[RMDB]
RNA sequence: GGGAACGACUCGAGUAGAGUCGAAAAUGCGGCCAAUCUGGCCCUGGAGCUUGACUCCGAGAGUGAGGUCGGCCGCGCGUGUGCCGGUUGUAAAGUUGAGCCUGGCUUAGUGCGGUACCAGUUCACGACGAUGAGCAACAUUCGUGUUGCUCAUCGUAAAAGAAACAACAACAACAAC
Reactivity to DMS in 0.01 (KOAc 150mM, MgCl2 10mM, bicine 150mM(pH8.5), 24C), signal-to-noise 2, nucleotides 027 to 126: u010g020c020g020g000c000c000a010a040u000c020u000g020g020c020c020c010u000g010g000a030g030c030u010u000g020a190c000u000c000c000g020a080g000a030g020u000g020a080g000g010u000c030g010g010c010c000g020c020g010c090g020u000g000u010g000c000c010g010g020u000u010g020u010a050a080a120g010u000u020g020a110g020c040c030u010g020g010c030u000u000a060g010u010g000c050g000g000u000a060c030c030a130g000u000u000c070a080c110g010